[RMDB]
RNA sequence: GGGAACGACUCGAGUAGAGUCGAAAAGAACCUGUUCGCAGGUUCAAAAAACCGUAGGUAAGUUCGCAUAGCAAGCGAUGCGAGUUCGAAAGAGCUCCAUCGUGAUGACCUAUGCGAGACUUACCUAAACGGAAAAAGUCUGGAUUCGUCCAGACAACCCCAUAUUACAGUUCGCUGUAAUAUGGGGAAAAGAAACAACAACAACAAC
Reactivity to 2A3 in 0.01 (KOAc 150mM, MgCl2 10mM, bicine 150mM(pH8.5), 24C), signal-to-noise 3, nucleotides 027 to 156: g010a000a000c010c010u020g010u050u100c250g000c090a010g030g000u030u020c000a020a000a020a000a000a000c010c010g010u010a010g000g000u000a000a000g000u010u020c000g000c000a000u010a000g030c030a300a100g030c020g000a000u020g070c200g030a010g000u010u010c020g040a120a060a050g000a030g000c000u010c000c000a000u000c010g000u000g010a070u070g010a020c000c000u010a000u010g000c000g000a010g010a010c000u000u000a000c000c000u000a020a000a000c010g000g090a040a010a210a020a060g000u090c000u060g000g000a040u080u070c180g030u050c140c000a000g000a000c000a000a000
Reactivity to DMS in 0.01 (KOAc 150mM, MgCl2 10mM, bicine 150mM(pH8.5), 24C), signal-to-noise 1, nucleotides 027 to 156: g000a000a000c010c000u000g060u000u010c300g030c010a020g030g020u030u000c010a010a030a060a060a020a100c000c010g010u020a080g010g020u010a010a030g000u000u000c020g030c010a040u000a010g000c010a070a300g010c000g000a010u010g000c030g030a020g020u010u010c000g000a160a130a300g000a060g040c000u000c000c000a000u000c000g010u020g000a100u030g000a090c300c000u000a020u010g000c010g010a050g000a010c010u000u000a000c000c000u000a000a010a060c000g000g000a110a080a090a120a110g020u010c000u000g000g010a140u000u000c170g010u000c010c010a040g000a020c010a040a080